Conditions: 150 mM KOAc, 10 mM MgCl2 and 150 mM bicine (pH 8.5), 24 C. This 177-nucleotide RNA was probed chemically with 2A3 and DMS. In probing experiments dimethyl sulfate is read out at A N1 and C N3, which are open when not base-paired. For 2A3, 1,325 sequencing reads were counted. For 2A3 the reverse transcriptase was SuperScript II with manganese.
RNA sequence: GGGAACGACUCGAGUAGAGUCGAAAAUGUUACCAUCAUCAACAAUGGUGUGAUCACCCAAUAGCUUUGGACAAUCUAUGCGAGUGUUGCAGGUUGGUGACGGCAUUACCAAACUUUGCUAGGUGCGUGUGUGUUAGGUGUUCGCACCUAACACACAAAAAGAAACAACAACAACAAC
Reactivity to 2A3 in 0.01 (KOAc 150mM, MgCl2 10mM, bicine 150mM(pH8.5), 24C), signal-to-noise 2, nucleotides 027 to 126: u100g000u050u090a000c020c010a050u020c000a000u010c010a010a080c030a090a170u100g110g020u000g020u080g060a090u110c030a010c010c000c000a050a080u050a060g050c000u080u040u090g060g000a070c050a110a100u060c020u110a020u080g060c040g020a050g040u060g080u060u060g040c140a110g010g000u040u030g020g020u000g030a020c000g010g010c000a010u040u120a030c020c040a060a040a060c050u100u150u130g030c040u090a060g030g040u110g060c080g050
Reactivity to DMS in 0.01 (KOAc 150mM, MgCl2 10mM, bicine 150mM(pH8.5), 24C), signal-to-noise 2, nucleotides 027 to 126: u000g020u000u010a040c070c020a050u000c040a020u010c060a060a070c110a150a090u000g000g010u000g000u000g010a060u000c040a070c010c020c020a070a070u010a060g000c190u000u000u030g000g000a170c120a110a060u000c010u000a040u010g000c100g010a030g030u000g010u020u000g020c090a040g000g020u000u000g010g010u000g020a050c080g010g000c020a120u000u010a110c070c030a070a120a090c110u000u010u000g020c060u000a090g000g020u000g000c050g000
The data come from the RNA Mapping Database (RMDB), library OK2TST.